RNA sequence: GGGAACGACUCGAGUAGAGUCGAAAAAGCAGUUUCUUUCAUACUGGUAAAGGUUGCUUUAUCUAGAACAAUAUCAACCAUCUGGCCAUUUUGUGUCUUAUUAUAAACAUCAAAUGCCUCUAAUAUAAUAUUAGGCAUGAUUCGUCAUGCCUAAUAUAAAAGAAACAACAACAACAAC
Reactivity to DMS in 0.01 (KOAc 150mM, MgCl2 10mM, bicine 150mM(pH8.5), 24C), signal-to-noise 4, nucleotides 027 to 126: a070g010c120a060g020u000u010u010c000u000u000u000c080a110u010a100c170u010g000g010u020a050a070a040g000g040u010u010g000c110u000u000u000a050u030c060u020a060g010a110a070c160a080a080u020a040u020c070a060a120c040c030a070u030c150u010g000g000c100c050a060u000u000u000u020g040u020g010u000c030u010u010a070u030u040a080u020a120a030a020c050a020u000c090a020a040a050u000g000c010c000u000c150u010a100a090u060a060u010a080
Reactivity to 2A3 in 0.01 (KOAc 150mM, MgCl2 10mM, bicine 150mM(pH8.5), 24C), signal-to-noise 6, nucleotides 027 to 126: a010g070c060a020g010u040u080u130c010u000u060u020c060a100u150a200c090u100g080g000u180a030a080a100g010g000u060u040g020c010u040u060u020a080u030c060u060a030g080a120a030c060a150a050u060a050u200c060a040a070c040c030a040u100c120u100g010g000c060c010a030u030u000u030u060g040u010g020u010c010u030u080a160u130u120a150u160a140a080a020c020a040u110c030a020a010a070u030g000c030c000u030c050u100a190a250u140a100u050a240

The data come from the RNA Mapping Database (RMDB), library OK1LIB. Structure probing data (DMS and 2A3) for a 177-nucleotide construct. The 2A3 profile rests on 2,337 reads.